[RMDB]
RNA sequence: GGGAACGACUCGAGUAGAGUCGAAAACGGCCGCUACCAUAGCUAUCCGCGACUGGUCGGCGAGACCGGGGGCAAGGACUUCGUGGUGGCGCACGCCUCGGCCCGCCCGGAUGUGCUGCGCACGGCCGAGACCCGCUAAAUUCGUUUAGCGGGUCUCAAAAGAAACAACAACAACAAC
Reactivity to DMS in 0.01 (KOAc 150mM, MgCl2 10mM, bicine 150mM(pH8.5), 24C), signal-to-noise 3, nucleotides 027 to 126: c050g000g000c060c030g020c070u000a050c110c020a020u000a120g030c060u000a090u020c140c040g020c080g000a180c120u010g000g010u000c050g010g020c100g020a180g000a030c010c010g000g020g020g000g010c050a110a090g000g000a090c110u000u000c070g000u000g000g020u000g000g000c060g000c040a030c100g000c010c030u000c040g000g000c010c050c080g020c070c020c000g020g000a050u000g010u010g010c010u000g000c090g030c080a150c040g020g000c030c040
Reactivity to 2A3 in 0.01 (KOAc 150mM, MgCl2 10mM, bicine 150mM(pH8.5), 24C), signal-to-noise 2, nucleotides 027 to 126: c020g020g050c050c000g000c060u050a020c000c000a020u070a050g020c030u080a050u140c060c050g000c020g100a050c080u040g000g010u060c020g060g100c050g000a060g000a010c000c000g000g010g020g050g040c060a130a130g070g000a070c020u070u040c130g030u020g020g020u030g060g040c020g010c020a040c020g010c010c000u000c030g040g000c010c040c000g010c000c010c010g060g000a070u110g080u080g060c030u030g030c030g020c030a060c030g030g000c010c020

The record gives the reactivity of an RNA of 177 nucleotides to DMS and 2A3. 2A3 adducts were read by reverse transcription with SuperScript II with manganese. The 2A3 profile rests on 2,635 reads. DMS (dimethyl sulfate) methylates the pairing face of unpaired adenines and cytosines. The RNA was probed in 150 mM KOAc, 10 mM MgCl2 and 150 mM bicine (pH 8.5) at 24 C.